Chemical mapping of a 177-nucleotide RNA with 2A3 and DMS. The RNA was probed in 150 mM KOAc, 10 mM MgCl2 and 150 mM bicine (pH 8.5) at 24 C. DMS adducts were read by reverse transcription with MarathonRT.
[RMDB]
RNA sequence: GGGAACGACUCGAGUAGAGUCGAAAAGGAAUGUGCUUCGGCACAUUCCAAAAGAAAGGCAGACGGCCAACGCCAAACGCUGACGAACCAAAAUCGAAGGUAAAACCCACCGGUUCGCCGGUGGGAACUAGGAAGUAAGGUUCGCCUUACUUCCUAGAAAAGAAACAACAACAACAAC
Reactivity to 2A3 in 0.01 (KOAc 150mM, MgCl2 10mM, bicine 150mM(pH8.5), 24C), signal-to-noise 3, nucleotides 027 to 126: g000g000a020a000u030g020u000g010c010u060u090c210g040g010c000a000c000a000u010u030c000c000a000a000a000a000g020a020a050a010g020g000c010a010g030a100c040g070g010c040c090a080a020c060g000c020c000a080a110a020c040g020c040u040g020a030c040g030a060a050c000c010a050a060a000a100u200c110g100a090a040g090g010u130a050a030a080a130c000c000c000a000c000c000g000g000u030u040c260g000c070c020g010g010u020g010g000g000a000a000
Reactivity to DMS in 0.01 (KOAc 150mM, MgCl2 10mM, bicine 150mM(pH8.5), 24C), signal-to-noise 4, nucleotides 027 to 126: g000g010a020a000u010g010u000g000c010u000u010c240g040g020c000a020c000a000u010u010c010c000a020a030a050a090g010a070a110a140g010g000c020a040g000a300c180g000g010c010c050a060a110c210g020c010c030a050a080a150c110g010c020u000g020a240c080g000a110a120c020c050a050a020a100a090u000c090g000a110a130g010g000u000a070a040a140a150c000c010c000a010c000c000g010g000u010u010c200g020c000c010g010g020u000g020g000g000a000a010